[RMDB]
RNA sequence: GGGAACGACUCGAGUAGAGUCGAAAAAACAAACAAACAAACAAAAUUGGCUGGGCGUGGUGGUGUGCACCUGUAGUACUAGCUAUUUGGAAAGCUGAGACAGGAGAAUCGCUUCAGCCCAGAAGGUUGAGGCUGCAGUGAGCCAAGAUCACGCCACCCUUUUCAUAUUUUUCGAAAUAUGAAAAGGAAAAGAAACAACAACAACAAC
Reactivity to 2A3 in 0.01 (KOAc 150mM, MgCl2 10mM, bicine 150mM(pH8.5), 24C), signal-to-noise 4, nucleotides 027 to 156: a000a000c140a070a040a010c070a040a060a010c030a070a050a030c080a110a170a120a080u110u100g090g020c110u110g080g010g000c000g010u000g010g010u040g040g040u100g070u130g040c060a080c040c000u020g010u030a040g040u000a100c030u010a020g020c010u030a100u090u100u100g080g040a200a090a010g000c000u000g010a010g030a080c010a020g000g040a090g130a090a080u120c040g000c020u030u020c000a010g000c000c010c010a010g030a060a050g030g000u060u030g050a040g030g030c000u000g030c020a000g000u000g100a020g010c000c000a020a000g050a030u020c010a000c000g000c010c000a020c010
Reactivity to DMS in 0.01 (KOAc 150mM, MgCl2 10mM, bicine 150mM(pH8.5), 24C), signal-to-noise 3, nucleotides 027 to 156: a070a090c050a100a100a090c080a130a070a190c070a090a100a300c070a070a110a110a220u010u010g020g010c090u000g030g040g010c010g020u000g020g030u010g010g010u000g010u000g000c030a160c050c000u000g030u000a040g020u060a050c060u020a030g010c000u000a100u010u010u000g000g010a090a120a100g000c000u010g000a200g000a060c010a040g020g000a200g020a090a120u000c100g000c010u000u000c080a000g000c010c000c000a090g010a050a270g020g000u010u000g000a090g000g010c030u000g030c070a080g000u020g010a150g010c020c010a070a130g010a060u010c000a040c010g020c010c010a150c120
This 207-nucleotide RNA was probed chemically with 2A3 and DMS. The 2A3 profile rests on 3,176 reads. The data come from the RNA Mapping Database (RMDB), library OK3TST. For 2A3 the reverse transcriptase was SuperScript II with manganese.